Source: RMDB library OK2TRN, as collected in RNAgym. Chemical mapping of a 177-nucleotide RNA with DMS and 2A3. For DMS the reverse transcriptase was MarathonRT.
[RMDB]
RNA sequence: GGGAACGACUCGAGUAGAGUCGAAAAGUGCUCAACGCCGUCGCCAACAAGCCCUCCCUGAGGGAGGUUGUGGCGCAGGUGGGGCAGAUGGCUGAGGCCUACAUUGAGCUGGCAGCUGUGCCUGCAGCGGAUGCAUAAGAUUCGUCUUAUGCAUCCGAAAAGAAACAACAACAACAAC
Reactivity to DMS in 0.01 (KOAc 150mM, MgCl2 10mM, bicine 150mM(pH8.5), 24C), signal-to-noise 9, nucleotides 027 to 126: g010u000g000c000u000c020a090a150c050g010c010c000g010u000c020g010c000c000a040a070c030a050a050g000c240c010c000u000c020c050c050u020g010a140g020g010g010a010g010g010u000u000g010u000g000g010c000g010c050a030g010g020u000g000g000g000g000c010a030g010a070u000g010g000c020u000g010a300g000g000c010c010u010a090c220a110u010u000g000a100g010c000u000g000g010c030a030g010c020u000g010u000g010c030c010u000g000c120a120g010
Reactivity to 2A3 in 0.01 (KOAc 150mM, MgCl2 10mM, bicine 150mM(pH8.5), 24C), signal-to-noise 9, nucleotides 027 to 126: g050u030g010c010u010c040a140a100c070g010c010c010g060u090c010g000c000c000a100a080c020a080a090g120c020c000c000u010c040c030c030u130g110a300g010g030g000a030g010g000u020u030g020u010g010g000c010g000c020a020g000g010u040g000g010g020g000c010a010g040a110u090g020g000c020u030g020a020g040g020c010c010u090a100c080a280u110u180g030a060g040c000u030g120g060c020a010g000c020u070g030u080g110c010c000u030g000c020a030g090